[RMDB]
RNA sequence: GGGAACGACUCGAGUAGAGUCGAAAAAAUGAGUUAAUGCUGGAAAGACAGUUCCUUGUAUUAGAAUUGUAGGAAUAACUUUGAUGGUGGGAAGAAUAUCUAGCGAAGUUGCUCUGCCUAUUUAUCCGACCUGUAACUCAUUCGUGAGUUACAGGUCAAAAGAAACAACAACAACAAC
Reactivity to 2A3 in 0.01 (KOAc 150mM, MgCl2 10mM, bicine 150mM(pH8.5), 24C), signal-to-noise 1, nucleotides 027 to 126: a010a010u060g000a040g000u080u060a060a070u190g020c020u000g000g050a060a020a080g040a060c040a080g030u030u000c000c010u000u060g230u110a190u060u070a060g100a130a010u090u050g030u080a000g000g070a170a060u120a110a020c010u060u000u090g050a070u160g040g060u090g050g000g060a070a000g000a070a000u040a050u110c000u020a030g000c010g050a020a050g070u080u040g010c030u020c010u010g030c000c030u170a220u110u170u050a030u160c010c030
Reactivity to DMS in 0.01 (KOAc 150mM, MgCl2 10mM, bicine 150mM(pH8.5), 24C), signal-to-noise 2, nucleotides 027 to 126: a030a040u010g000a050g020u000u000a030a060u000g010c030u010g000g000a040a120a120g030a100c150a080g010u000u000c010c060u000u010g030u010a080u000u010a060g000a120a100u010u000g010u000a070g000g020a120a060u010a060a120c080u010u000u000g010a060u000g020g020u000g000g010g010a020a070g010a100a110u010a090u000c010u000a030g010c040g020a070a110g010u000u000g000c050u000c030u000g000c040c020u000a050u030u010u000a080u010c180c130
Structure probing data (2A3 and DMS) for a 177-nucleotide construct. The RNA was probed in 150 mM KOAc, 10 mM MgCl2 and 150 mM bicine (pH 8.5) at 24 C. For DMS, 1,765 sequencing reads were counted. It was measured as part of the RMDB library OK2TRN. For DMS the reverse transcriptase was MarathonRT.